[RMDB]
RNA sequence: GGGAACGACUCGAGUAGAGUCGAAAAGCAGCUACCAAGCGGUGCGGACCAACUUCUUCGAUACCUACUUCGCCAGCGCUGUCGCCGCCGGAAUCCGGCAGGUAGUGAUUCUGGCGUCCGGACUGGACGUAAUCCACUGUUUCGACAGUGGAUUACGAAAAGAAACAACAACAACAAC
Reactivity to 2A3 in 0.01 (KOAc 150mM, MgCl2 10mM, bicine 150mM(pH8.5), 24C), signal-to-noise 9, nucleotides 027 to 126: g040c030a000g000c020u070a100c050c030a100a040g050c050g040g090u070g030c030g020g020a040c020c020a080a060c030u080u060c020u070u050c050g040a040u060a140c000c010u060a070c020u060u080c020g020c010c000a040g000c040g000c060u020g030u080c040g040c120c030g000c010c010g050g030a150a100u110c030c010g050g000c060a050g070g040u080a040g020u040g090a070u080u010c000u010g000g000c000g000u000c010c000g040g090a090c020u050g020g020a020
Reactivity to DMS in 0.01 (KOAc 150mM, MgCl2 10mM, bicine 150mM(pH8.5), 24C), signal-to-noise 4, nucleotides 027 to 126: g040c100a080g000c040u000a060c060c080a120a110g000c060g010g010u010g010c080g000g000a090c070c050a080a070c050u000u030c060u000u000c060g030a060u030a080c030c000u020a080c060u000u030c060g000c000c010a050g020c110g020c020u000g000u020c060g000c170c050g000c020c000g000g000a110a070u010c030c030g000g030c090a040g020g020u000a050g000u020g000a110u010u000c000u000g000g020c010g000u000c020c000g020g000a160c050u010g020g010a300